RNA sequence: GGGAACGACUCGAGUAGAGUCGAAAAUGAUGGGAUGACCACAAUCGCGGAGGCGAUGGAAGCAGCUAGGGAUUUCACACCUGAUGUACACGAUCGCCUGGCUGAGCUCGCGAAUGAGGUGGCCCGUGGCGUGAAAUCCACGGGGGACAGCGCCUCAAGGCUUCUAUAAUUUCGAUUAUAGAAGCCUAAAAGAAACAACAACAACAAC
Reactivity to 2A3 in 0.01 (KOAc 150mM, MgCl2 10mM, bicine 150mM(pH8.5), 24C), signal-to-noise 3, nucleotides 027 to 156: u160g030a030u030g010g000g030a020u110g110a050c020c000a020c040a080a090u050c030g030c040g040g210a050g040g020c040g010a040u070g010g050a080a000g050c000a010g010c040u040a030g030g010g050a050u060u150u140c130a080c030a050c070c040u140g030a200u090g030u070a010c060a030c220g050a010u000c020g070c120c000u000g030g000c020u050g010a010g050c020u040c080g020c010g010a060a070u100g000a000g000g000u020g010g030c000c000c000g000u010g000g000c030g010u080g030a030a020a040u050c000c010a000c010g000g000g000g010g040a000c030a060g000c020g010c000c000u000c010a000
Reactivity to DMS in 0.01 (KOAc 150mM, MgCl2 10mM, bicine 150mM(pH8.5), 24C), signal-to-noise 1, nucleotides 027 to 156: u010g020a060u000g010g010g000a070u010g000a130c030c010a100c080a080a060u000c080g030c010g020g010a150g000g020c000g000a070u010g020g010a080a170g000c010a050g010c060u000a080g040g030g010a180u000u010u020c140a090c090a090c040c020u010g040a130u000g000u000a050c080a140c070g000a080u000c010g010c000c020u010g010g110c020u000g000a110g020c030u000c000g010c010g000a060a160u000g000a030g080g000u000g000g000c000c000c040g050u000g040g000c120g000u010g030a060a160a220u000c000c000a030c000g010g020g010g000g000a090c060a100g020c060g020c000c000u000c010a100